[RMDB]
Structure probing data (2A3 and DMS) for a 177-nucleotide construct. The RNA was probed in 150 mM KOAc, 10 mM MgCl2 and 150 mM bicine (pH 8.5) at 24 C. For 2A3, 28,348 sequencing reads were counted. For 2A3 the reverse transcriptase was SuperScript II with manganese.
RNA sequence: GGGAACGACUCGAGUAGAGUCGAAAACAAGAGGGUCGGAAAGAGAUUCCUGUGUGGGCGUACGAUCAUAUUCUGUCGUGAACCAAUCCGUAGUCUCCCCGGACUCUGGCACAGGAGGCAAAGACAGAUAUCAUAGCUGAUUCGUCAGCUAUGAUAUAAAAGAAACAACAACAACAAC
Reactivity to 2A3 in 0.01 (KOAc 150mM, MgCl2 10mM, bicine 150mM(pH8.5), 24C), signal-to-noise 9, nucleotides 027 to 126: c060a030a040g040a070g080g040g040u050c040g040g040a090a080a020g090a030g010a070u060u070c010c010u030g020u030g020u060g070g030g010c060g030u090a020c020g010a050u110c060a040u090a130u220u120c080u090g030u010c010g020u020g060a070a040c020c000a030a050u050c020c020g030u040a030g020u010c020u010c030c010c000c000g020g020a030c020u020c040u080g040g000c040a030c020a070g040g020a030g040g000c050a060a040a020g060a040c040a020g090
Reactivity to DMS in 0.01 (KOAc 150mM, MgCl2 10mM, bicine 150mM(pH8.5), 24C), signal-to-noise 9, nucleotides 027 to 126: c090a100a080g000a090g000g000g010u000c020g010g000a060a060a070g010a100g010a130u030u000c010c010u000g010u020g010u010g000g000g010c280g010u010a040c040g010a040u020c120a060u030a110u030u020c080u010g010u000c010g000u000g000a120a130c030c030a080a110u030c020c030g010u010a060g000u000c020u010c060c020c030c030g000g000a030c020u010c050u010g010g010c040a030c050a040g000g000a040g010g010c110a060a070a100g000a070c100a070g000